RNA sequence: GGGAACGACUCGAGUAGAGUCGAAAAUACACCUUUUUUAGACACCUGGGUUUUAUUGCUCAAGUAACUGUGUAGGGACCAGAGAUAAAACGUACGGACCAUUAACGCCAGGUAAUGGGAACUGAGAUGUAUAUCCAGCGUUCGCGCUGGAUAUACAAAAAGAAACAACAACAACAAC
Reactivity to DMS in 0.01 (KOAc 150mM, MgCl2 10mM, bicine 150mM(pH8.5), 24C), signal-to-noise 1, nucleotides 027 to 126: u000a070c080a200c010c010u000u000u030u000u000u010a070g010a180c160a080c020c000u000g010g030g010u000u000u000u030a020u010u010g010c080u000c080a040a110g030u000a060a070c080u000g000u010g010u000a040g000g010g010a080c030c050a080g000a080g020a040u000a030a010a000a080c040g030u000a080c170g010g010a130c040c040a040u010u000a060a080c080g000c120c080a050g010g000u000a030a030u000g000g000g000a040a090c100u010g020a110g000a180